RNA sequence: GGGAACGACUCGAGUAGAGUCGAAAAGCUCUGGAAUUGAGGCCACUCUAACAAUAAUCCAAAACUACUUCGCAGAGUAAUCUGCCGAAUCGUAGGAUGCCCAUUACUAUCUAUUUUUGGAGCAUCUAAAACUGUCAGUGCUUCGGCACUGACAGAAUCAUUAAACGGGGUUCGCCCCGUUUAAUGAAAAAGAAACAACAACAACAAC
Reactivity to 2A3 in 0.01 (KOAc 150mM, MgCl2 10mM, bicine 150mM(pH8.5), 24C), signal-to-noise 3, nucleotides 027 to 156: g010c000u000c030u040g030g080a080a030u060u040g030a020g080g060c020c010a070c040u060c030u110a090a100c040a080a160u170a050a070u080c050c030a030a090a050a080c030u050a020c010u000u000c010g000c010a000g010a020g070u130a080a190u000c000u010g050c080c050g040a010a030u080c080g010u030a050g010g040a000u010g000c000c000c000a020u050u030a050c070u050a100u170c030u080a200u120u120u020u020u010g020g000a110g020c000a000u000c010u070a030a020a050a110c000u000g000u000c000a000g000u010g000c000u020u050c100g030g000c000a000c000u000g000a000c000a000g000a000a030
Reactivity to DMS in 0.01 (KOAc 150mM, MgCl2 10mM, bicine 150mM(pH8.5), 24C), signal-to-noise 2, nucleotides 027 to 156: g030c030u000c010u020g020g030a090a150u000u010g010a110g010g030c000c070a060c060u010c040u000a070a160c060a140a090u010a070a100u000c050c040a060a070a150a140c050u010a050c040u010u000c030g010c000a070g000a040g030u000a100a150u000c010u010g020c000c020g020a010a020u010c080g020u000a150g000g000a040u010g010c030c010c020a080u000u000a060c150u010a130u010c120u000a170u000u010u000u000u000g020g000a150g000c000a040u000c030u000a040a070a110a160c010u000g010u000c000a020g060u000g030c010u000u010c300g050g020c050a000c000u000g000a000c000a000g000a050a070
This 207-nucleotide RNA was probed chemically with 2A3 and DMS. The data come from the RNA Mapping Database (RMDB), library M2RFOK. The RNA was probed in 150 mM KOAc, 10 mM MgCl2 and 150 mM bicine (pH 8.5) at 24 C.